Description:
Chemical mapping of a 177-nucleotide RNA with 2A3. Values cover nucleotides 27 to 126. Source: RMDB libraries RFM100 and RFMREP, as collected in RNAgym.
RNA sequence: GGGAACGACUCGAGUAGAGUCGAAAAGGAUCGUUUCGUAUAAUUUUGGUGCAAAAUAGUAGAGAGACGCAGUGUUACUCUUCCUUACGUUACCUGUAUCUGGAGAGUGUCAAGCGUUUCCCACAUUGCUCAUAUAGCACUUCGGUGCUAUAUGAGCAAAAGAAACAACAACAACAAC
Reactivity to 2A3 in 0.01 (KOAc 150mM, MgCl2 10mM, bicine 150mM(pH8.5), 24C), signal-to-noise 5, nucleotides 027 to 126: g080g010a090u070c020g000u010u010u030c050g020u060a080u090a160a290u080u150u140u160g110g000u080g030c030a070a060a050a140u090a070g060u060a010g050a000g000a000g000a100c030g000c030a060g060u010g070u150u030a000c000u020c000u070u180c000c000u050u010a030c020g150u090u110a100c020c030u120g010u060a030u050c120u070g000g000a010g000a000g000u000g000u000c020a070a030g030c010g010u000u000u000c000c000c000a060c000a040u000u020